Chemical mapping of a 177-nucleotide RNA with DMS and 2A3. Values cover nucleotides 27 to 126. Reactivities are rounded to 0.1 and cut off at 0 and 3. The reactions ran in a buffer of 150 mM KOAc, 10 mM MgCl2 and 150 mM bicine (pH 8.5), at 24 C. High DMS reactivity at an A or C suggests that its Watson-Crick edge is free. DMS adducts were read by reverse transcription with MarathonRT.

RNA sequence: GGGAACGACUCGAGUAGAGUCGAAAAAUAUUAGAAGAUAUGGAUCUUCCUCCCCACCGAACUACAAGGAGUACGUGUCGGAAACGACAUAAAACUUGCGAGGGAAGAUCCUAAGUCCAUAAAGCAACAAACUUACUAUCUUCGGAUAGUAAGUUUGAAAAGAAACAACAACAACAAC
Reactivity to DMS in 0.01 (KOAc 150mM, MgCl2 10mM, bicine 150mM(pH8.5), 24C), signal-to-noise 4, nucleotides 027 to 126: a100u020a070u000u010a070g000a150a110g010a050u000a190u010g000g000a010u010c000u010u010c000c000u000c040c010c030c090a290c150c090g000a070a060c110u010a080c060a030a030g000g010a080g010u000a050c300g000u010g010u000c000g010g000a050a030a100c000g000a010c000a020u000a010a060a110a100c000u000u010g000c120g010a080g010g010g000a020a000g000a020u000c010c000u010a030a070g000u000c010c030a110u020a040a060a160g000c160a050a140
Reactivity to 2A3 in 0.01 (KOAc 150mM, MgCl2 10mM, bicine 150mM(pH8.5), 24C), signal-to-noise 4, nucleotides 027 to 126: a000u290a110u190u250a090g060a180a020g010a050u030a030u130g010g000a010u010c010u010u000c000c000u070c010c050c000c000a080c040c080g190a170a090c040u160a090c210a110a110g070g020a020g100u030a040c120g020u010g010u010c000g000g000a020a030a020c000g010a000c010a000u130a020a070a030a020c020u060u150g070c060g040a040g040g000g030a000a020g000a000u000c000c000u010a050a010g020u000c000c030a080u200a160a180a030g140c050a010a100